[RMDB]
Description:
Chemical mapping of a 177-nucleotide RNA with 2A3 and DMS. 2A3 adducts were read by reverse transcription with SuperScript II with manganese.
RNA sequence: GGGAACGACUCGAGUAGAGUCGAAAAUUGUGGACGGUAUACAGCAGAAAGCCCCAGGCGAUUUUUUUAUCAAUCAACCAGGGGCUCUACUGUAAUGCCUAGACAACAUUAUAGUAGCCCGAUAACCCCUAACUAGUUCGUUCGCGAACUAGUUAGGAAAAGAAACAACAACAACAAC
Reactivity to 2A3 in 0.01 (KOAc 150mM, MgCl2 10mM, bicine 150mM(pH8.5), 24C), signal-to-noise 5, nucleotides 027 to 126: u020u020g000u000g020g000a020c030g000g000u000a030u000a020c000a000g020c000a010g030a100a260a010g000c000c010c010c020a020g030g000c030g000a000u000u010u020u030u020u160u190a210u260c070a010a000u000c000a010a100c020c010a070g010g000g000g000c000u010c000u000a000c000u010g000u020a040a130u060g020c010c000u000a010g010a010c000a050a000c010a010u090u170a090u070a170g190u090a030g050c010c000c000g000a050u110a090a080c010c020
Reactivity to DMS in 0.01 (KOAc 150mM, MgCl2 10mM, bicine 150mM(pH8.5), 24C), signal-to-noise 3, nucleotides 027 to 126: u010u000g000u000g010g020a090c220g000g000u010a030u000a000c000a040g000c030a030g000a050a090a100g020c040c000c000c020a080g000g000c300g000a000u000u000u020u050u120u040u020a070u020c170a010a010u000c020a090a120c020c040a050g030g010g000g010c030u000c000u000a020c000u000g000u010a040a070u040g020c000c000u000a230g030a000c010a030a040c180a070u030u030a170u040a140g010u000a130g030c020c000c000g010a080u030a070a120c250c100